[RMDB]
RNA sequence: GGGAACGACUCGAGUAGAGUCGAAAACGCUGGGCACCACUGUCUCAGUAUCGUGUUGUCAGCUCUGUACUGAAGCGCGCACGGUACGGAGCUUGGAUUUACACGAGAACCGACAGUGGUGCCUGUGCUGAAGCGCGCACGGCAACCGAAAGGUGCGGAUGUGCAACUAGUUCGCUAGUUGCACAUCAAAAGAAACAACAACAACAAC
Reactivity to 2A3 in 0.01 (KOAc 150mM, MgCl2 10mM, bicine 150mM(pH8.5), 24C), signal-to-noise 1, nucleotides 027 to 156: c050g000c020u040g000g000g020c000a010c010c000a010c000u030g000u010c010u010c040a040g000u000a010u000c000g000u000g000u010u100g010u010c010a000g000c000u020c000u010g000u000a020c020u060g090a300a080g050c050g010c030g010c100a030c100g020g000u000a000c000g000g000a000g000c020u010u130g040g000a010u150u130u300a010c010a010c000g030a000g020a010a030c040c040g030a000c010a000g000u010g000g000u000g000c010c000u000g000u010g000c000u030g010a070a000g020c000g000c000g030c030a010c000g030g000c040a140a040c060c040g190a170a070a020g080g020u040g030c070g000
Reactivity to DMS in 0.01 (KOAc 150mM, MgCl2 10mM, bicine 150mM(pH8.5), 24C), signal-to-noise 1, nucleotides 027 to 156: c020g020c000u040g010g020g020c000a000c020c000a050c030u020g030u000c000u000c000a120g020u000a090u000c030g030u000g010u000u000g010u020c000a140g020c010u000c040u000g020u000a040c020u010g000a050a040g000c020g020c070g000c020a300c000g000g010u000a000c000g000g010a030g000c020u000u000g030g010a060u000u010u000a050c020a070c000g000a030g000a150a100c080c290g010a020c030a050g000u010g000g000u000g000c000c010u000g010u000g000c000u000g010a130a100g020c020g000c040g020c000a130c030g010g000c020a030a160c030c040g010a140a150a200g000g000u000g000c010g000